The data come from the RNA Mapping Database (RMDB), library 15KREP. The record gives the reactivity of an RNA of 177 nucleotides to 2A3 and DMS. The DMS profile rests on 3,660 reads. Conditions: 150 mM KOAc, 10 mM MgCl2 and 150 mM bicine (pH 8.5), 24 C.
RNA sequence: GGGAACGACUCGAGUAGAGUCGAAAACUCAGUGUGUCCGUGACCCUGUGGGAUUUUGUUUGUCAAAUACCCCCUGUAAUGUCUGUCAAUAUUGGAUUGGAUAUGGGUGCAAUUGUGACUCGCUUAGGAACUUUACAUGGUUCGCCAUGUAAAGUUCAAAAGAAACAACAACAACAAC
Reactivity to 2A3 in 0.01 (KOAc 150mM, MgCl2 10mM, bicine 150mM(pH8.5), 24C), signal-to-noise 3, nucleotides 027 to 126: c000u000c010a010g010u000g000u010g000u000c000c020g030u020g020a020c000c020c030u030g030u120g020g000g000a020u000u010u040u040g130u060u100u270g230u160c010a010a020a010u110a090c010c000c000c000c020u000g060u080a050a040u050g010u010c010u000g020u010c010a040a060u070a180u300u180g090g010a020u040u210g000g000a010u010a030u080g020g000g000u050g070c010a050a080u070u060g020u030g020a010c000u010c020g000c010u050u030a040g040
Reactivity to DMS in 0.01 (KOAc 150mM, MgCl2 10mM, bicine 150mM(pH8.5), 24C), signal-to-noise 3, nucleotides 027 to 126: c010u000c030a040g030u000g020u010g010u000c020c020g030u000g010a070c020c020c010u000g020u010g030g000g010a120u000u000u000u000g010u000u010u010g030u000c000a010a020a040u010a200c080c010c010c040c040u000g010u010a130a070u000g020u000c020u010g010u000c020a080a120u030a180u010u010g010g010a050u000u010g010g000a030u000a040u010g010g000g010u000g000c050a050a080u000u000g030u000g000a040c010u000c010g010c030u010u000a110g020